[RMDB]
Record summary: This 177-nucleotide RNA was probed chemically with DMS. Conditions: 150 mM KOAc, 10 mM MgCl2 and 150 mM bicine (pH 8.5), 24 C. For DMS, 886 sequencing reads were counted. The data come from the RNA Mapping Database (RMDB), library OK2TRN.
RNA sequence: GGGAACGACUCGAGUAGAGUCGAAAAGCCGUUCUUUGCGUUCCUUCUGGGUGAAUGUGUAAGCCAAAAAAGCUUUGCUUCUUUUAUCGCUGAAAUCUCACGGAUAGCAGCCGUUGUCUUAGGAACACUGCACCAGGGUAUUCGUACCCUGGUGCAGAAAAGAAACAACAACAACAAC
Reactivity to DMS in 0.01 (KOAc 150mM, MgCl2 10mM, bicine 150mM(pH8.5), 24C), signal-to-noise 1, nucleotides 027 to 126: g000c060c040g020u020u000c030u020u000u000g020c070g040u000u000c010c000u000u000c120u010g020g010g020u000g000a060a090u000g000u010g020u000a070a100g000c030c060a000a130a030a140a100a050g000c030u000u000u000g000c070u000u000c040u050u000u000u010a120u000c230g000c060u000g000a060a170a030u000c010u000c070a040c120g000g030a110u000a040g050c050a060g020c080c070g040u000u000g000u010c050u000u000a090g000g000a030a020c100a290